[RMDB]
RNA sequence: GGGAACGACUCGAGUAGAGUCGAAAAAGUGUGGGCUCAGGAAGAGAAGGAAUGUGACUGAGGCUGGGUGUGGCAGAGGAGAGCACAGCCAGUUGUGGGUUUUUCUUGGGGCCCAGAUAGAUGGGAAUAAAUGAUUUGGGUUCGCCCAAAUCAUUUAAAAAGAAACAACAACAACAAC
Reactivity to 2A3 in 0.01 (KOAc 150mM, MgCl2 10mM, bicine 150mM(pH8.5), 24C), signal-to-noise 7, nucleotides 027 to 126: a000g190u170g030u050g030g010g010c000u000c030a020g100g060a040a030g050a020g040a120a070g120g100a150a090u200g050u130g100a030c020u050g020a020g070g000c010u010g000g050g050u020g000u030g050g030c050a050g020a050g220g080a070g020a010g040c000a000c000a020g100c000c000a010g000u030u030g040u140g030g050g010u060u060u010u010u010c020u010u030g020g000g030g010c000c000c000a000g000a010u080a020g100a050u080g070g010g030a060a030
Reactivity to DMS in 0.01 (KOAc 150mM, MgCl2 10mM, bicine 150mM(pH8.5), 24C), signal-to-noise 5, nucleotides 027 to 126: a070g020u020g010u010g010g010g010c010u000c020a070g000g010a070a040g000a090g010a130a080g010g010a080a080u040g010u020g010a070c030u010g000a160g010g000c000u010g000g010g020u000g000u000g020g010c070a100g000a100g020g010a090g020a220g000c010a020c020a010g000c000c010a040g000u010u000g010u040g000g010g010u010u010u010u000u000c000u000u000g010g010g010g010c010c010c000a020g000a040u010a040g000a090u010g000g000g010a100a210